An RNA of 207 nucleotides, treated with 2A3 and read out base by base.
For 2A3 the reverse transcriptase was SuperScript II with manganese.
The RNA was probed in 150 mM KOAc, 10 mM MgCl2 and 150 mM bicine (pH 8.5) at 24 C.

[RMDB]
RNA sequence: GGGAACGACUCGAGUAGAGUCGAAAAAGCUGGUAGUACUACGGUACUACCAGCAUAAUUCGUGGUUCGAAAACCUCCCACGCAAAAAAACUAAGGAAAAACGCCGAUUAGUACGCUACUCGGCGAAGGUACCGGAAUCAGUUCGCUGAUUCCGGAAGUAAGUCGAUUAGUUCGCUAAUCGACUUACAAAAGAAACAACAACAACAAC
Reactivity to 2A3 in 0.01 (KOAc 150mM, MgCl2 10mM, bicine 150mM(pH8.5), 24C), signal-to-noise 1, nucleotides 027 to 156: a000g000c000u000g000g000u000a000g000u000a000c000u000a030c240g040g010u000a000c000u000a000c010c000a000g000c000a000u000a000a060u000u040c020g010u030g000g040u040u170c050g100a160a080a010a070c000c000u000c000c080c020a040c020g120c080a000a000a040a130a100a060a080c080u170a090a210g050g000a130a100a040a000a000c020g000c000c000g000a000u030u020a000g010u030a010c100g000c060u010a000c010u010c000g000g000c010g010a000a000g000g000u040a020c000c000g000g000a000a000u000c000a000g050u060u120c160g000c040u010g000a000u010u000c000c010g000g000a010a000

Background: For 2A3, 721 sequencing reads were counted.